RNA sequence: GGGAACGACUCGAGUAGAGUCGAAAAAGGAGUCUGACAUGCGUGCGAGUCGACGGGUUCUGAAACCUGGGAUGCGCAAGGAAGCUGACGAGCGGGAGGCCUUCACGGGCUGCACCGCUGGCCGACCCGUUUUACCUCCUUUCGAGGAGGUAAAACGAAAAGAAACAACAACAACAAC
Reactivity to DMS in 0.01 (KOAc 150mM, MgCl2 10mM, bicine 150mM(pH8.5), 24C), signal-to-noise 5, nucleotides 027 to 126: a090g010g000a150g010u000c030u000g020a170c070a060u030g020c040g000u010g020c030g030a200g020u000c010g000a090c020g000g000g000u000u010c150u030g000a100a030a040c030c000u000g000g010g020a040u010g010c050g000c050a020a060g010g000a160a090g010c020u000g000a060c040g020a040g030c000g010g000g000a300g020g010c000c000u000u010c260a100c280g000g010g000c020u000g000c080a300c000c000g020c010u000g000g000c000c020g000a180c040c010
Reactivity to 2A3 in 0.01 (KOAc 150mM, MgCl2 10mM, bicine 150mM(pH8.5), 24C), signal-to-noise 6, nucleotides 027 to 126: a000g080g010a030g020u040c030u060g020a050c030a020u090g010c010g030u030g020c030g020a040g030u030c010g040a150c000g020g020g000u090u090c210u300g110a160a060a010c000c000u010g020g040g000a020u040g010c010g000c020a000a010g060g030a040a040g010c040u050g040a070c070g030a020g000c000g010g010g010a040g000g020c000c010u110u130c070a040c100g010g010g000c000u020g020c120a040c020c010g000c000u000g020g010c000c010g020a070c000c000
The record gives the reactivity of an RNA of 177 nucleotides to DMS and 2A3. The reactions ran in a buffer of 150 mM KOAc, 10 mM MgCl2 and 150 mM bicine (pH 8.5), at 24 C. 2A3 adducts were read by reverse transcription with SuperScript II with manganese. Source: RMDB libraries RFM100 and RFMREP, as collected in RNAgym.